[RMDB]
RNA sequence: GGGAACGACUCGAGUAGAGUCGAAAAGCGUACUACGAAAGCUUUUGACGCUCGAGGGACUAAGACAGUUUAUCCCAAAUAGGAUAAACAAUGACGGUCCGUAGAGCGAUAAGCUUUCGUAUCGCAAAAGUGCCUACUGCUUCGGCAGUAGGCACAAUCGCAUUUUAGGAUUCGUCCUAAAAUGCGAAAAAGAAACAACAACAACAAC
Reactivity to 2A3 in 0.01 (KOAc 150mM, MgCl2 10mM, bicine 150mM(pH8.5), 24C), signal-to-noise 1, nucleotides 027 to 156: g000c020g000u100a070c080u000a020c070g000a000a000a000g000c000u030u000u000u150g300a170c050g010c020u000c020g000a150g000g080g000a010c010u080a150a000g050a020c050a040g000u010u000u000a020u030c000c000c090a080a080a180u300a110g000g000a000u000a000a000a000c070a180a090u090g030a060c000g010g000u040c040c010g000u020a010g000a000g000c000g000a000u000a000a000g000c040u000u000u000c020g000u000a000u010c010g000c010a070a070a000a000g010u000g020c000c010u000a000c000u000g040c000u030u160c210g010g000c020a000g000u010a000g010g000c010a010c000a000a000
Reactivity to DMS in 0.01 (KOAc 150mM, MgCl2 10mM, bicine 150mM(pH8.5), 24C), signal-to-noise 1, nucleotides 027 to 156: g030c000g060u020a000c110u000a020c010g000a070a050a090g030c010u020u000u000u030g000a260c040g000c010u000c000g000a300g010g000g010a030c000u010a100a190g020a150c050a110g000u000u000u000a000u030c000c000c020a040a240a220u000a140g000g020a060u000a000a010a020c020a180a150u000g000a190c160g020g040u000c000c020g000u010a300g010a030g000c010g020a060u000a060a000g000c020u000u000u000c010g000u000a000u000c030g030c030a080a040a060a190g010u000g000c000c000u010a020c000u020g000c020u000u000c300g020g070c010a000g050u000a000g000g030c020a000c000a000a090

Structure probing data (2A3 and DMS) for a 207-nucleotide construct. In probing experiments dimethyl sulfate is read out at A N1 and C N3, which are open when not base-paired. 2A3 adducts were read by reverse transcription with SuperScript II with manganese. Values cover nucleotides 27 to 156. The 2A3 profile rests on 961 reads. Conditions: 150 mM KOAc, 10 mM MgCl2 and 150 mM bicine (pH 8.5), 24 C.